[RMDB]
Annotation
Conditions: 150 mM KOAc, 10 mM MgCl2 and 150 mM bicine (pH 8.5), 24 C. The record gives the reactivity of an RNA of 177 nucleotides to 2A3 and DMS. DMS adducts were read by reverse transcription with MarathonRT. Values are in units of 0.01, from 0 to 300, in steps of 10.
RNA sequence: GGGAACGACUCGAGUAGAGUCGAAAAUGGGAAACCAAACAGAGUAACUUAUCUUAAGUUACUUAUUUUCACUUCCUGUAUAUUUAUUUUAGACCCUUUUGGUUAAACACCGCUCUAUCGAGCGGUGUUUGCGAGGAUUAUUCGUAAUCCUCGCAAAAAAAGAAACAACAACAACAAC
Reactivity to 2A3 in 0.01 (KOAc 150mM, MgCl2 10mM, bicine 150mM(pH8.5), 24C), signal-to-noise 2, nucleotides 027 to 126: u060g000g000g000a000a020a050c020c020a030a060a010c120a090g020a000g020u000a000a000c000u020u000a050u300c090u160u130a050a000g010u000u000a000c000u000u000a040u050u020u080u050c040a060c060u050u050c000c010u010g150u090a080u020a070u150u230u020a190u030u170u010u020a070g090a090c000c000c000u030u080u070u300g030g010u000u090a000a040a000c000a000c000c000g030c030u000c000u060a180u290c210g040a010g020c110g000g010u010g010
Reactivity to DMS in 0.01 (KOAc 150mM, MgCl2 10mM, bicine 150mM(pH8.5), 24C), signal-to-noise 4, nucleotides 027 to 126: u020g010g000g000a060a030a090c140c180a030a060a080c240a160g010a000g000u000a010a010c000u000u000a040u110c160u030u030a000a000g010u000u000a000c000u000u000a010u010u010u000u020c160a180c120u010u020c000c000u000g000u030a080u020a080u030u040u050a060u060u060u000u010a180g000a160c030c010c100u010u000u000u030g010g010u010u010a110a060a070c000a010c010c020g030c020u010c000u060a190u030c300g000a030g050c020g010g020u000g010